[RMDB]
RNA sequence: GGGAACGACUCGAGUAGAGUCGAAAACCAAUGGGAAACCAUUGGCAACUCGGAAACGAGUUGAAGCGGGAAUUACGAACCAAACCGCCGACAAUGCGAUUUUAAGCAUUGUCGAUUACGCCCAUGUCGAUUUUAAGACAUGGAGCGAAGGUUCGAAGCAUCGAGGUCCGUUCGCGGACUUUGAUGCAAAAGAAACAACAACAACAAC
Reactivity to DMS in 0.01 (KOAc 150mM, MgCl2 10mM, bicine 150mM(pH8.5), 24C), signal-to-noise 5, nucleotides 027 to 156: c010c010a000a020u000g010g010g010a230a120a250c000c010a020u000u010g010g010c000a020a020c010u000c010g010g010a180a100a250c000g010a040g020u000u000g010a090a150g050c020g010g010g010a130a090u000u000a170c020g000a010a010c010c000a040a090a140c000c020g000c090c010g010a020c000a010a000u000g010c000g010a300u000u010u010u000a120a300g000c000a020u010u000g000u010c000g010a060u000u000a090c000g000c010c010c010a030u000g020u000c010g000a300u000u010u010u010a090a260g010a010c000a010u000g000g000a050g080c000g000a070a070g000g010u010u000c000g000a150a270
Reactivity to 2A3 in 0.01 (KOAc 150mM, MgCl2 10mM, bicine 150mM(pH8.5), 24C), signal-to-noise 8, nucleotides 027 to 156: c000c000a000a000u010g000g000g020a040a020a020c000c000a000u000u000g010g000c000a000a000c000u000c000g020g030a110a060a040c010g000a000g000u000u010g010a040a000g010c010g000g010g030a080a080u140u080a100c010g000a000a000c000c000a020a020a020c000c000g000c000c000g000a000c000a000a000u000g000c010g100a160u010u050u110u300a080a010g000c000a000u000u000g000u000c000g000a000u000u010a020c000g000c000c010c000a000u000g000u000c020g030a090u060u060u080u300a090a010g000a000c000a000u000g010g010a030g000c000g000a010a020g000g000u000u000c000g000a020a010